[RMDB]
RNA sequence: GGGAACGACUCGAGUAGAGUCGAAAAGCGUCCUGGUUCGCCAGGACGCAAAUAAAUGGUAGACUGAGACCGUCUAACUCAGAUAACCAGAAAUUGACGGAAAAACUGACUUGUUCGCAAGUCAGAACCUACACUUAACCUUCGGGUUAAGUGUAGGAAAAGAAACAACAACAACAAC
Reactivity to DMS in 0.01 (KOAc 150mM, MgCl2 10mM, bicine 150mM(pH8.5), 24C), signal-to-noise 2, nucleotides 027 to 126: g020c000g000u000c000c000u000g000g000u000u000c190g010c000c000a000g010g020a000c000g010c000a010a020a100u000a020a050a080u000g000g010u010a090g050a110c000u000g000a000g000a150c000c040g010u000c030u000a030a080c000u000c000a010g000a060u020a150a230c010c000a070g000a000a050a100u000u010g000a010c030g000g000a150a080a050a080a200c000u000g000a010c000u000u000g010u000u010c200g010c000a000a000g000u000c000a000g000a060a050
Reactivity to 2A3 in 0.01 (KOAc 150mM, MgCl2 10mM, bicine 150mM(pH8.5), 24C), signal-to-noise 3, nucleotides 027 to 126: g020c010g020u000c010c010u010g050g060u060u050c210g030c100c000a000g010g010a000c010g000c000a000a010a000u010a000a030a030u100g060g010u060a050g080a300c010u000g000a010g000a040c010c010g040u050c040u070a070a040c010u000c000a000g020a080u140a080a050c020c010a000g060a040a130a050u050u040g010a020c030g000g000a010a040a030a060a050c000u000g010a000c000u010u010g030u080u140c230g000c100a000a000g000u000c000a000g000a000a020
This 177-nucleotide RNA was probed chemically with DMS and 2A3. The reactions ran in a buffer of 150 mM KOAc, 10 mM MgCl2 and 150 mM bicine (pH 8.5), at 24 C. For 2A3 the reverse transcriptase was SuperScript II with manganese. It was measured as part of the RMDB library M2PK50. For DMS, 1,792 sequencing reads were counted.